Chemical mapping of a 177-nucleotide RNA with DMS and 2A3. The 2A3 profile rests on 800 reads. For 2A3 the reverse transcriptase was SuperScript II with manganese.
[RMDB]
RNA sequence: GGGAACGACUCGAGUAGAGUCGAAAAGAAGCCGCCUUCGAACCUUCGGGUUCUCCGGUGUGUGGAUGCGCGUGAACCGAUCUGGUAGUAGCCAAGCGAUGGGGUGACGCAGGAAGGUAGCUGAGCCUCCCAGCAUCCUGUUCGCAGGAUGCUGGGAAAAAGAAACAACAACAACAAC
Reactivity to DMS in 0.01 (KOAc 150mM, MgCl2 10mM, bicine 150mM(pH8.5), 24C), signal-to-noise 1, nucleotides 027 to 126: g000a300a050g110c010c000g000c070c040u030u000c080g000a000a030c000c000u040u040c070g000g000g000u000u030c000u010c100c010g100g110u000g020u040g030u010g000g030a020u000g090c110g010c000g060u000g040a160a130c030c000g000a060u080c030u000g000g010u000a190g070u010a230g000c000c020a030a020g050c120g000a100u000g010g000g030g000u010g000a080c100g000c000a010g000g020a040a000g020g030u000a110g000c100u000g000a200g000c010c010
Reactivity to 2A3 in 0.01 (KOAc 150mM, MgCl2 10mM, bicine 150mM(pH8.5), 24C), signal-to-noise 2, nucleotides 027 to 126: g050a020a000g010c020c020g010c000c040u020u000c020g000a000a020c000c020u060u100c170g150g010g000u000u000c030u030c050c020g160g040u200g000u060g070u170g160g000a040u020g040c060g010c020g050u030g060a000a000c000c000g040a070u110c030u000g020g020u040a120g010u130a040g100c000c030a090a000g080c060g110a010u110g030g000g000g000u030g000a030c000g000c000a000g120g020a010a010g000g030u020a000g010c010u020g050a010g000c000c000
Source information
The RNA was probed in 150 mM KOAc, 10 mM MgCl2 and 150 mM bicine (pH 8.5) at 24 C. It was measured as part of the RMDB library RFM100.